[RMDB]
This 177-nucleotide RNA was probed chemically with DMS and 2A3. DMS adducts were read by reverse transcription with MarathonRT. The 2A3 profile rests on 2,233 reads. Values cover nucleotides 27 to 126. Source: RMDB library M2PK50, as collected in RNAgym.
RNA sequence: GGGAACGACUCGAGUAGAGUCGAAAAGUGAGAACGUUCGCGUUCUCACAAAUACUAAGACCGAAGCUAAGAUGGCCGACACUUCCCUUGGAAACGGCACAAAAAUGAUAGGUUUCGACCUAUCAAAGUGACCUUGUAUGUUCGCAUACAAGGUCACAAAAGAAACAACAACAACAAC
Reactivity to DMS in 0.01 (KOAc 150mM, MgCl2 10mM, bicine 150mM(pH8.5), 24C), signal-to-noise 2, nucleotides 027 to 126: g000u000g020a000g000a010a000c010g020u020u010c160g010c010g010u000u000c000u000c000a000c000a020a070a150u010a110c140u010a100a080g000a090c030c040g000a070a070g020c080u020a120a080g000a070u000g020g020c000c020g030a130c130a090c110u000u010c020c010c040u020u010g020g020a110a070a200c070g020g000c040a110c150a030a100a040a030a080u000g020a020u010a000g000g000u010u000u000c130g000a000c020c010u010a010u000c000a000a000a110
Reactivity to 2A3 in 0.01 (KOAc 150mM, MgCl2 10mM, bicine 150mM(pH8.5), 24C), signal-to-noise 2, nucleotides 027 to 126: g000u020g010a010g000a000a010c000g010u050u040c150g050c000g070u000u000c010u000c000a020c000a000a010a000u070a000c020u100a110a020g050a020c000c080g100a100a000g080c040u090a050a030g060a140u160g090g020c020c010g040a020c020a030c070u030u000c000c000c000u020u030g010g050a040a080a020c040g030g000c030a020c040a140a080a020a010a020u080g000a020u000a000g000g000u010u040u080c170g060a020c020c000u010a000u000c000a000a020a000